[RMDB]
RNA sequence: GGGAACGACUCGAGUAGAGUCGAAAAUUCCCUCCCAAGAAGGUUCAAGAGAAUACAAGAAAUGGAGGAAUUUCCCCAUAACGCCGGUGAAACUCUUGGAAGCGGAAGAAGGAAGGCGGAGAAAAGGCCUUACUAAAUCCUUCGGGAUUUAGUAAGGAAAAGAAACAACAACAACAAC
Reactivity to 2A3 in 0.01 (KOAc 150mM, MgCl2 10mM, bicine 150mM(pH8.5), 24C), signal-to-noise 1, nucleotides 027 to 126: u010u000c000c000c000u000c020c020c000a050a020g040a030a010g110g000u040u070c040a080a000g040a000g020a170a000u100a180c050a040a050g090a090a180a010u020g000g010a020g020g070a100a100u110u050u050c000c020c000c020a030u040a020a030c080g070c090c040g000g000u110g000a090a050a080c000u030c030u020u010g000g020a030a010g050c020g030g020a000a060g020a020a020g110g000a030a010g000g020c020g040g060a050g070a020a070a020a000g120g020
Reactivity to DMS in 0.01 (KOAc 150mM, MgCl2 10mM, bicine 150mM(pH8.5), 24C), signal-to-noise 1, nucleotides 027 to 126: u000u010c020c000c020u000c040c000c050a110a090g020a170a060g010g000u020u000c020a070a060g010a050g000a030a110u000a120c010a090a050g000a090a190a040u020g000g010a060g020g000a120a150u000u000u000c010c010c010c110a080u010a030a080c100g020c050c050g050g030u000g000a070a090a110c040u000c010u000u000g000g010a050a040g000c070g000g000a030a040g000a080a040g000g020a050a060g020g020c080g000g000a050g000a070a070a090a100g000g020